Source information
An RNA of 177 nucleotides, treated with 2A3 and DMS and read out base by base. Values are in units of 0.01, from 0 to 300, in steps of 10. It was measured as part of the RMDB library RFMREP. For 2A3 the reverse transcriptase was SuperScript II with manganese.
RNA sequence: GGGAACGACUCGAGUAGAGUCGAAAAAGAUAUAGCGUAUUGAUGAUAGCCAUUUUAAACUAUGCGCUUCGUUUUGCAGGUUGAUGUUUGUUAUCAGCACUGAACGAAAAUAAAGCAGUAACCCGCACUAUGUUACUUACUUCGGUAAGUAACAUAGAAAAGAAACAACAACAACAAC
Reactivity to 2A3 in 0.01 (KOAc 150mM, MgCl2 10mM, bicine 150mM(pH8.5), 24C), signal-to-noise 3, nucleotides 027 to 126: a000g140a030u130a020u080a090g000c000g010u020a020u030u110g100a100u060g020a070u100a040g060c040c020a100u050u070u020u150a060a080a030c020u030a010u050g010c000g000c000u010u020c030g020u020u030u050u070g040c060a030g010g030u020u000g020a030u030g080u060u250u130g140u150u130a020u020c000a000g030c040a040c080u010g010a030a010c010g030a040a040a010a040u140a020a050a010g060c030a010g040u050a060a040c010c000c000g000c000a010
Reactivity to DMS in 0.01 (KOAc 150mM, MgCl2 10mM, bicine 150mM(pH8.5), 24C), signal-to-noise 6, nucleotides 027 to 126: a070g020a110u010a070u000a050g010c020g020u000a040u000u000g010a110u010g010a170u010a070g010c140c090a060u010u000u000u010a050a110a110c080u000a040u000g000c040g010c040u000u000c040g010u000u000u000u000g010c130a040g020g010u000u000g010a010u000g010u010u000u010g010u010u010a030u000c010a030g010c020a110c040u000g000a010a050c040g000a030a040a070a090u010a050a080a100g010c060a070g010u010a090a110c010c010c010g020c200a230